[RMDB]
RNA sequence: GGGAACGACUCGAGUAGAGUCGAAAAGAAGCUAGAGGCUCACUGAAAGAGGGCUCCCAUGCACAGUGAGUUAUAGAACAAGAGAUAGGAUUCCUGUGGGUAGAAGAGAAGAAGCAUGGAUGAGUCAUUCCCAGUCAUCACAAGACUGUGAACCCCAAACAUACGACCAUUUCGAUGGUCGUAUGUUAAAAGAAACAACAACAACAAC
Reactivity to DMS in 0.01 (KOAc 150mM, MgCl2 10mM, bicine 150mM(pH8.5), 24C), signal-to-noise 1, nucleotides 027 to 156: g000a050a100g050c040u030a060g000a300g010g050c000u000c010a040c010u000g000a100a080a120g020a020g000g030g000c010u000c030c010c030a050u000g100c100a140c030a050g070u000g000a100g080u000u000a080u000a060g010a090a130c070a080a160g000a040g000a080u000a050g000g060a240u000u000c070c040u010g070u000g020g010g010u000a050g010a130a030g000a150g000a030a040g060a030a050g000c040a070u000g020g000a020u000g040a030g000u000c050a110u010u010c000c000c030a180g030u000c030a170u000c030a090c150a040a100g020a090c090u010g000u000g010a080a130c000c020c000c020a030
Reactivity to 2A3 in 0.01 (KOAc 150mM, MgCl2 10mM, bicine 150mM(pH8.5), 24C), signal-to-noise 2, nucleotides 027 to 156: g030a010a040g020c020u040a020g010a050g150g030c010u000c000a010c010u040g080a040a060a050g040a070g020g020g010c020u050c000c040c030a010u090g000c020a020c000a030g010u020g040a010g000u040u060a090u030a050g040a030a040c050a040a040g050a000g020a070u060a080g090g000a060u070u040c010c020u070g000u050g030g010g030u050a040g030a100a000g010a000g000a050a010g040a030a010g000c030a020u030g010g070a070u110g020a010g030u030c010a070u000u020c000c050c000a000g020u000c020a020u050c000a010c040a200a110g040a060c030u010g030u030g120a030a060c010c000c000c010a000